RNA sequence: GGGAACGACUCGAGUAGAGUCGAAAACAACCUGGGAGUUACGUCCGGAUAUUGCCCCAGGUGCAAUAGAACGGUAGACAUCAACUGAUGCGAGAGCAUCUCAACUUAUGGACCUUAGUGUAUCGCAAGACGACAGGUCCAGUCGGAAUUGCGUAGAACGUGCUAUCAGUUUCGACUGAUAGCACGUAAAAGAAACAACAACAACAAC
Reactivity to 2A3 in 0.01 (KOAc 150mM, MgCl2 10mM, bicine 150mM(pH8.5), 24C), signal-to-noise 2, nucleotides 027 to 156: c030a010a000c010c000u000g000g040g000a180g070u060u070a080c090g050u000c060c010g040g000a060u080a130u100u080g030c000c000c040c000a010g000g010u000g010c010a020a040u100a090g080a130a030c010g070g000u040a030g040a070c040a050u100c040a040a070c080u090g000a010u010g040c030g020a040g000a010g080c020a010u010c010u030c050a080a200c010u100u150a010u130g030g000a010c000c020u070u070a110g050u030g060u130a050u060c020g040c060a040a020g060a030c010g010a010c050a000g080g000u000c000c010a000g000u000c020g030g050a090a030u000u070g010c010g000u030a040g030a130
Reactivity to DMS in 0.01 (KOAc 150mM, MgCl2 10mM, bicine 150mM(pH8.5), 24C), signal-to-noise 2, nucleotides 027 to 156: c050a110a180c010c000u010g010g010g010a140g040u000u000a060c070g000u000c090c060g010g030a220u000a100u040u000g000c040c000c050c070a030g050g040u000g020c100a060a130u000a060g010a140a110c010g010g000u000a190g010a130c070a090u000c130a160a090c030u000g010a040u000g030c000g020a290g020a250g040c010a040u000c000u000c010a050a090c060u000u000a120u000g020g000a030c010c000u000u000a030g070u000g000u000a090u010c050g010c200a100a120g000a110c040g030a100c100a000g030g020u010c030c010a020g000u000c000g010g250a100a080u010u010g020c000g000u000a150g020a110